[RMDB]
RNA sequence: GGGAACGACUCGAGUAGAGUCGAAAAGAAGGGCGACGCAAUCCGCUUCGUCGAAGGAUCGGAUGUAAUGAUCUAACGGUUUGCGGCGGACUCGACCGCCGCAACCUUCCAUGAAUGGAGUGAGGAAGUGUUUAUGACGAUUCGUCGUCAUAAACACAAAAGAAACAACAACAACAAC
Reactivity to DMS in 0.01 (KOAc 150mM, MgCl2 10mM, bicine 150mM(pH8.5), 24C), signal-to-noise 4, nucleotides 027 to 126: g000a120a090g030g000g000c050g020a050c090g000c130a090a110u000c070c040g010c060u000u000c010g020u010c040g020a090a160g020g000a030u010c030g010g010a110u010g010u000a110a090u010g010a030u000c010u000a100a150c190g000g020u000u010u000g030c010g000g030c000g000g000a090c170u020c260g020a090c020c010g020c000c000g010c010a000a000c010c000u010u000c020c030a070u020g010a080a080u000g000g000a050g020u020g000a060g010g010a110a090
Reactivity to 2A3 in 0.01 (KOAc 150mM, MgCl2 10mM, bicine 150mM(pH8.5), 24C), signal-to-noise 2, nucleotides 027 to 126: g120a030a060g090g000g000c030g020a000c050g060c100a010a150u110c050c030g030c030u030u000c000g100u040c020g050a110a030g030g000a020u040c030g010g100a050u120g120u240a190a150u150g050a020u030c030u080a140a030c040g030g000u030u100u130g030c000g010g010c000g050g000a050c020u050c080g200a120c000c020g000c000c000g000c000a010a010c000c000u010u000c010c010a040u090g120a100a050u140g000g020a040g040u140g040a080g010g090a140a090